[RMDB]
RNA sequence: GGGAACGACUCGAGUAGAGUCGAAAAACGCUCGUAAAUCCACUGGAAAACUAUAAACGCCAACGACGAGCGUUUCGCUCUAGCCGCUUAAGGCUGGGCCACUGCACUAAUUUGUCUUUGGGUUAGGUAGGGCAACCUACAGCAGUGUUAUUUACAACAACGUCAAUGCGUUCGCGCAUUGACGUUGAAAAGAAACAACAACAACAAC
Reactivity to 2A3 in 0.01 (KOAc 150mM, MgCl2 10mM, bicine 150mM(pH8.5), 24C), signal-to-noise 1, nucleotides 027 to 156: a000c030g050c000u010c010g090u100a000a060a160u100c040c090a050c090u000g010g000a060a140a070a070c020u100a170u080a300a160a100c150g010c040c070a090a060c100g170a000c010g000a010g000c000g000u000u010u020c000g000c030u100c010u080a000g010c010c020g140c230u300u300a130a000g000g010c000u000g000g000g000c010c000a000c000u010g000c000a000c020u000a010a010u010u070u090g090u020c050u080u080u060g000g010g000u000u000a010g000g000u000a000g010g010g000c050a030a050c000c000u000a010c010a010g000c000a000g000u000g000u150u120a050u090u120u110a060c020a130a010

Conditions: 150 mM KOAc, 10 mM MgCl2 and 150 mM bicine (pH 8.5), 24 C. An RNA of 207 nucleotides, treated with 2A3 and read out base by base. 2A3 adducts were read by reverse transcription with SuperScript II with manganese.